RNA sequence: GGGAACGACUCGAGUAGAGUCGAAAACGGGCGCUCCCCUCGGACCUCCUCUGGAGGGGUUCACAUCCCCAACCCGCGGGCCGGCUACUCUUCUUUUCCUUUCCUCGUCUUCAUCGGUCAGCCUUCUCUACUUUCUGGUUCGCCAGAAAGAAAAGAAACAACAACAACAAC
Reactivity to DMS in 0.01 (KOAc 150mM, MgCl2 10mM, bicine 150mM(pH8.5), 24C), signal-to-noise 9, nucleotides 027 to 129: c080g010g010g010c140g010c070u010c000c020c000c040u000c070g020g020a100c050c040u000c030c010u010c100u010g000g050a110g000g000g000g000u000u010c090a070c100a150u020c000c010c020c040a130a140c030c030c050g000c030g000g010g020c040c020g020g030c070u030a030c030u030c040u030u000c030u020u020u030u020c020c030u000u010u040c020c020u030c080g010u010c050u010u010c030a060u030c020g000g010u000c050a050g010c040c030u020u030c010u010c000u010a170
Reactivity to 2A3 in 0.01 (KOAc 150mM, MgCl2 10mM, bicine 150mM(pH8.5), 24C), signal-to-noise 9, nucleotides 027 to 129: c010g000g020g000c040g020c030u030c000c010c000c000u010c010g040g040a050c010c020u050c010c010u080c060u100g040g040a060g030g010g000g010u060u070c060a060c020a140u140c000c010c000c000a030a060c010c000c010g020c030g010g010g010c010c020g020g000c020u030a060c020u020c000u080u050c010u040u030u030u060c010c000u040u070u070c000c020u040c010g080u010c040u100u020c030a090u040c000g010g020u020c000a020g040c010c000u080u030c020u000c000u030a100